An RNA of 207 nucleotides, treated with 2A3 and read out base by base.
The RNA was probed in 150 mM KOAc, 10 mM MgCl2 and 150 mM bicine (pH 8.5) at 24 C.
It was measured as part of the RMDB library OK3TST.
For 2A3 the reverse transcriptase was SuperScript II with manganese.
RNA sequence: GGGAACGACUCGAGUAGAGUCGAAAACACAUACCCAGAAUGUAUUGACAGGUCAGAGUCUGCUUAUAGAUUGAUCAGUGGGUAAAAUAAGGGAACAACAUUUUUAUUGCUCUUUUUACAUUAUGACUAGCAUUUUUCCUCAACAUUGAUUAUAAGCGACAGCUUUCUCGUUCGCGAGAAAGCUGUCAAAAGAAACAACAACAACAAC
Reactivity to 2A3 in 0.01 (KOAc 150mM, MgCl2 10mM, bicine 150mM(pH8.5), 24C), signal-to-noise 2, nucleotides 027 to 156: c060a000c010a040u050a090c000c030c010a030g080a060a110u160g080u160a120u020u140g010a030c060a070g060g030u180c040a030g050a010g230u010c030u060g010c010u010u030a030u010a040g110a070u010u070g020a000u040c000a020g040u030g000g000g000u000a000a000a000a070u190a010a030g060g010g050a050a050c020a050a040c010a050u050u140u140u210u200a110u080u130g040c000u000c000u040u090u080u050u010a060c050a060u060u140a200u290g050a040c070u050a010g060c030a040u000u100u020u000u050c050c030u110c030a030a080c010a050u040u130g040a010u080u220a120u120a170a010g020c030